The data come from the RNA Mapping Database (RMDB), library OK3TST. Chemical mapping of a 207-nucleotide RNA with 2A3. For 2A3 the reverse transcriptase was SuperScript II with manganese. For 2A3, 621 sequencing reads were counted. The RNA was probed in 150 mM KOAc, 10 mM MgCl2 and 150 mM bicine (pH 8.5) at 24 C.

RNA sequence: GGGAACGACUCGAGUAGAGUCGAAAAAAAGUACACAGACAACAAAAAGCAUGACGAAUGCAACAGUACAUCACAUUUCAGUACUAACCUUGAAUGUAAGUGGCCUAAAUGCUUCACUUAAAAGAUACAGAAACACAGAAUGGACAAGAACUCACCACGCUUCGUAUGGAUUCGUCCAUACGAAGCGAAAAGAAACAACAACAACAAC
Reactivity to 2A3 in 0.01 (KOAc 150mM, MgCl2 10mM, bicine 150mM(pH8.5), 24C), signal-to-noise 1, nucleotides 027 to 156: a000a000a000g050u020a050c110a010c000a000g050a150c020a050a000c020a130a160a000a000a000g000c030a010u050g040a060c040g110a140a010u130g020c020a040a000c050a060g000u090a020c010a020u110c080a040c040a160u090u080u000c020a040g000u020a060c030u070a040a050c020c030u020u050g040a080a000u060g020u060a030a030g080u000g050g000c030c030u070a050a030a040u040g000c000u040u080c000a000c080u020u040a000a080a040a000g010a000u000a020c000a000g030a000a100a000c040a020c000a050g060a190a000u030g020g010a010c050a110a000g050a020a080c040u030c040a070c030c000a030